This 207-nucleotide RNA was probed chemically with DMS and 2A3.
DMS adducts were read by reverse transcription with MarathonRT.
Reactivities are given for positions 27 through 156.
It was measured as part of the RMDB library M2RFPK.
The DMS profile rests on 2,932 reads.
Conditions: 150 mM KOAc, 10 mM MgCl2 and 150 mM bicine (pH 8.5), 24 C.
[RMDB]
RNA sequence: GGGAACGACUCGAGUAGAGUCGAAAACCUACUCAAUACGUCCUCGUCGUACAGAACGGUAACAUGUUUUCCGAACAUCCGCGCUUGGGUAUACGAGUAUACACCUUACCCAACCCUCGCCAACGCGAGUGCAUCCACGAGUUCGCUCGUGGAUGAAUAACUGCUACUGUUUCGACAGUAGCAGUUAAAAAGAAACAACAACAACAAC
Reactivity to DMS in 0.01 (KOAc 150mM, MgCl2 10mM, bicine 150mM(pH8.5), 24C), signal-to-noise 2, nucleotides 027 to 156: c040c070u000a000c050u000c020a080a160u000a090c050g020u000c020c030u000c040g020u010c040g010u030a160c080a050g000a080a100c000g010g020u000a070a120c060a160u000g010u000u000u020u000c010c030g000a070a130c010a040u000c030c000g020c050g000c010u000u000g030g030g010u000a070u010a090c130g010a080g040u000a080u010a130c110a070c080c030u000u010a070c010c000c010a130a070c110c000c000u000c080g040c050c010a100a070c130g000c010g030a000g030u000g020c020a020u000c000c000a010c010g000a020g030u000u000c290g010c010u000c000g040u000g000g000a000u000g000a020a070
Reactivity to 2A3 in 0.01 (KOAc 150mM, MgCl2 10mM, bicine 150mM(pH8.5), 24C), signal-to-noise 3, nucleotides 027 to 156: c010c000u000a040c030u040c030a040a030u060a100c040g110u090c020c020u040c030g110u030c010g020u090a040c030a090g070a120a020c020g000g070u080a090a040c080a170u160g080u050u060u050u010c020c020g020a050a020c020a100u100c030c030g060c000g020c070u020u020g000g000g060u040a050u040a100c090g020a030g090u020a010u050a070c100a100c020c020u060u140a070c000c000c040a040a060c040c060c000u020c020g010c030c080a090a020c080g000c000g010a020g000u080g020c000a000u000c000c000a000c010g010a010g000u010u080c170g070c100u000c000g000u000g000g000a000u000g000a000a000